[RMDB]
RNA sequence: GGGAACGACUCGAGUAGAGUCGAAAAGAUAUGGAAGACUCAGGGAGCCUGGUCGGAAACGACCAUGCUUUGAUCUGAAUCUUCCUAAGUCAAAACUUUUCCUCGAUCUUCGGAUCGAGGAAAAGAAUCUAUAGGGGUACUUCGGUACCCCUAUAGAAAAAGAAACAACAACAACAAC
Reactivity to DMS in 0.01 (KOAc 150mM, MgCl2 10mM, bicine 150mM(pH8.5), 24C), signal-to-noise 1, nucleotides 027 to 126: g000a010u000a300u010g000g020a000a010g000a020c050u000c000a010g010g020g010a020g010c000c090u000g010g030u000c000g010g010a050a040a090c000g020a020c000c000a000u000g000c000u000u010u010g010a070u010c000u000g000a010a060u010c010u000u010c010c000u000a020a050g020u010c040a080a060a130a190c010u000u000u000u000c000c000u000c000g000a010u010c000u010u010c190g000g000a000u000c000g020a000g000g000a000a000a010a000g010a130a070